[RMDB]
RNA sequence: GGGAACGACUCGAGUAGAGUCGAAAAGUUGCACGUGGGCGUCCAAUAUCGACAGGAAGAUGCUGACUCGCGGUAACGGCGUGUCACCCAUGCUGAGUUCGGCCGGUGGGGCCGCUGAGUCGAUCGCGAUAGAAAAUCGUUUCGACGAUUUUCUAUCAAAAGAAACAACAACAACAAC
Reactivity to 2A3 in 0.01 (KOAc 150mM, MgCl2 10mM, bicine 150mM(pH8.5), 24C), signal-to-noise 5, nucleotides 027 to 126: g070u060u070g040c050a020c130g040u090g020g030g010c010g050u020c030c010a060a040u090a040u130c080g050a050c040a030g040g060a040a090g050a070u110g050c090u110g040a080c010u000c040g020c030g040g020u050a080a050c040g030g000c020g000u070g060u040c040a050c010c010c020a040u140g020c030u060g030a120g090u100u120c050g040g010c000c010g040g080u070g020g030g040g000c000c000g000c030u110g020a020g010u030c000g000a030u090c080g010c050
Reactivity to DMS in 0.01 (KOAc 150mM, MgCl2 10mM, bicine 150mM(pH8.5), 24C), signal-to-noise 5, nucleotides 027 to 126: g020u000u010g000c040a040c030g020u010g000g020g020c040g020u020c020c050a040a110u040a040u020c040g020a090c100a120g000g010a100a100g020a070u000g010c050u030g020a060c040u010c020g000c030g020g000u000a090a120c100g000g000c020g000u000g000u010c060a100c040c070c040a060u020g010c050u000g010a120g000u010u010c040g010g010c020c110g010g020u020g000g010g010g020c010c010g000c040u020g010a070g010u000c010g010a110u010c070g020c250
This 177-nucleotide RNA was probed chemically with 2A3 and DMS. Values cover nucleotides 27 to 126. It was measured as part of the RMDB library OK1LIB. DMS adducts were read by reverse transcription with MarathonRT. The reactions ran in a buffer of 150 mM KOAc, 10 mM MgCl2 and 150 mM bicine (pH 8.5), at 24 C. For DMS, 14,002 sequencing reads were counted.